This 177-nucleotide RNA was probed chemically with DMS and 2A3. The DMS profile rests on 788 reads. Values cover nucleotides 27 to 126. 2A3 adducts were read by reverse transcription with SuperScript II with manganese. Conditions: 150 mM KOAc, 10 mM MgCl2 and 150 mM bicine (pH 8.5), 24 C. For 2A3, 1,278 sequencing reads were counted. For DMS the reverse transcriptase was MarathonRT.
[RMDB]
RNA sequence: GGGAACGACUCGAGUAGAGUCGAAAACUGCUUAACUUCGGUUAAGCAGAAAGUGAUCAAAGCCGAAAGACACCGGCAAGUGUCCGGCAGCACAAGCCGAAAAAACGGAUGACUUCGGUCAUCCGAAGUCAUCGAGUGUGUUCGCACACUCGAUGACAAAAGAAACAACAACAACAAC
Reactivity to DMS in 0.01 (KOAc 150mM, MgCl2 10mM, bicine 150mM(pH8.5), 24C), signal-to-noise 1, nucleotides 027 to 126: c000u000g000c000u000u000a000a000c000u000u030c150g040g010u000u000a000a010g000c000a000g010a030a020a100g010u000g000a100u000c080a050a080a140g000c000c010g040a060a210a140g000a010c020a010c000c030g050g050c240a090a110g030u010g000u010c000c010g000g000c060a030g020c000a010c050a020a190g010c060c050g010a000a040a040a060a050a190c020g000g000a020u000g010a020c000u000u010c090g010g000u000c080a010u000c010c000g000a010a010
Reactivity to 2A3 in 0.01 (KOAc 150mM, MgCl2 10mM, bicine 150mM(pH8.5), 24C), signal-to-noise 1, nucleotides 027 to 126: c000u000g030c000u000u010a020a020c010u040u060c090g040g000u020u000a000a000g000c000a000g000a000a000a000g010u010g050a160u170c060a160a070a030g000c000c000g030a160a090a130g020a000c000a000c000c000g300g030c110a070a050g020u030g000u010c030c030g060g000c000a000g000c010a020c010a020a010g040c010c000g230a090a050a000a020a020a020c030g000g000a030u000g000a000c010u000u080c300g110g000u050c000a010u000c000c010g010a000a010